[RMDB]
RNA sequence: GGGAACGACUCGAGUAGAGUCGAAAACAGGGCCCCCUCAUCACGGAGGUUAUUUUGUUGAGAAACGUGCUGUUGAUGUUCUGAACCAGGGGGCCUACGGGGGUCAGGUACUUGUGGAAGUCGCCGUUCUCCAGCCUCUCCCCCAGGUUAGGAAUGGCUAUUACAAUAAAUUCGUUUAUUGUAAUAGAAAAGAAACAACAACAACAAC
Reactivity to 2A3 in 0.01 (KOAc 150mM, MgCl2 10mM, bicine 150mM(pH8.5), 24C), signal-to-noise 2, nucleotides 027 to 156: c040a030g010g000g010c000c000c000c000c000u020c030a020u020c000a010c010g060g010a040g050g070u050u030a140u040u140u060u130g120u070u130g030a050g100a050a010a000c050g110u170g030c010u030g020u240u030g000a030u030g020u210u150c090u160g070a160a120c060c000a030g000g000g000g010g000c000c000u000a010c010g000g000g010g000g000u020c050a020g030g010u070a090c070u140u140g030u180g070g060a070a050g020u160c080g070c120c050g070u110u010c010u000c010c000a000g040c000c000u010c030u040c000c010c000c010c000a000g020g030u070u110a000g000g110a060a060u160g060g000
Reactivity to DMS in 0.01 (KOAc 150mM, MgCl2 10mM, bicine 150mM(pH8.5), 24C), signal-to-noise 2, nucleotides 027 to 156: c050a140g000g060g010c010c000c000c000c020u000c030a080u000c030a080c020g000g010a080g010g050u010u010a040u010u000u010u000g010u000u010g010a300g010a100a070a090c090g030u010g040c020u010g020u000u010g000a080u000g020u010u000c030u000g000a060a100c050c050a060g020g000g060g100g050c010c000u000a000c060g020g010g040g060g020u000c050a050g010g030u000a060c110u000u020g030u010g020g010a080a270g010u000c060g020c030c030g010u010u000c000u010c070c020a120g000c000c010u000c020u000c010c000c000c040c030a040g010g020u000u010a110g000g010a080a060u010g010g030
An RNA of 207 nucleotides, treated with 2A3 and DMS and read out base by base. Reactivities are given for positions 27 through 156. For DMS, 3,538 sequencing reads were counted. The 2A3 profile rests on 885 reads.